[RMDB]
Source: RMDB libraries RFM100 and RFMREP, as collected in RNAgym. The record gives the reactivity of an RNA of 177 nucleotides to 2A3 and DMS. The RNA was probed in 150 mM KOAc, 10 mM MgCl2 and 150 mM bicine (pH 8.5) at 24 C.
RNA sequence: GGGAACGACUCGAGUAGAGUCGAAAAGGUAGGAGGUACUCGGGGGGUAGGGGUGAAAUCCUGUAAUCCUCCGGGGACCACCGGUGGCGAAGGCGUCCUACCAGAACAGGUCCGACGGUGAGGGACGGUCAAUCGUAUAGUUCGCUAUACGAUUGACAAAAGAAACAACAACAACAAC
Reactivity to 2A3 in 0.01 (KOAc 150mM, MgCl2 10mM, bicine 150mM(pH8.5), 24C), signal-to-noise 4, nucleotides 027 to 126: g050g010u050a020g000g070a030g020g000u020a040c010u000c000g010g000g000g000g000g000u010a020g030g050g000g010u050g080a020a020a020u050c000c000u050g050u110a040a030u030c000c000u010c000c000g000g000g010g000a000c000c000a010c000c000g010g070u090g030g020c090g030a070a040g050g020c010g030u020c000c000u000a010c000c010a010g030a070a060c050a030g000g080u030c020c030g020a050c040g040g050u040g080a090g000g030g030a010c020g000
Reactivity to DMS in 0.01 (KOAc 150mM, MgCl2 10mM, bicine 150mM(pH8.5), 24C), signal-to-noise 4, nucleotides 027 to 126: g010g030u010a050g000g020a070g020g020u010a000c010u000c030g010g000g010g000g020g020u000a090g000g000g000g000u010g010a110a100a060u050c000c010u020g000u040a040a020u010c000c000u000c000c000g000g000g020g000a030c020c020a080c050c020g010g020u020g010g000c040g020a090a080g000g000c090g000u010c010c010u000a060c010c000a120g010a090a140c110a080g000g010u000c030c020g000a120c120g020g000u020g000a100g010g000g000a080c050g010